[RMDB]
RNA sequence: GGGAACGACUCGAGUAGAGUCGAAAAUAUGACAUAAAUAGUUGAAGUGGAGUCAAACAAGGGAUAAAGAGAAAUGGGGUAUUCAAGAUAUACUCUCCUAAUACUAUGGAGAACUAUAUAGCUAUACCCGCAUUUAGGAUUUCGAUCCUAAAUGCGGAAAAGAAACAACAACAACAAC
Reactivity to DMS in 0.01 (KOAc 150mM, MgCl2 10mM, bicine 150mM(pH8.5), 24C), signal-to-noise 2, nucleotides 027 to 126: u020a070u010g010a080c100a120u010a080a090a010u000a120g010u000u010g000a040a210g020u000g010g000a060g000u000c020a050a040a090c080a050a000g030g030g000a090u000a060a050a090g000a100g010a010a080a050u010g000g000g010g000u020a020u010u030c090a140a060g000a020u000a000u010a030c030u000c030u000c000c000u000a000a090u040a140c220u070a100u010g010g000a040g020a050a060c200u000a010u000a040u000a060g010c070u000a080u000a060c070
Reactivity to 2A3 in 0.01 (KOAc 150mM, MgCl2 10mM, bicine 150mM(pH8.5), 24C), signal-to-noise 2, nucleotides 027 to 126: u230a140u060g010a000c020a020u300a050a120a000u100a080g000u020u070g090a190a010g050u050g000g020a000g020u040c060a000a050a040c090a120a090g090g040g050a080u090a220a190a000g030a020g000a000a070a060u040g000g000g000g000u000a020u090u040c040a030a010g020a010u000a000u000a090c000u030c000u000c000c000u050a100a220u050a240c100u080a090u220g020g030a000g000a010a010c000u000a000u000a000u000a020g040c020u000a000u060a050c000

The record gives the reactivity of an RNA of 177 nucleotides to DMS and 2A3.
The RNA was probed in 150 mM KOAc, 10 mM MgCl2 and 150 mM bicine (pH 8.5) at 24 C.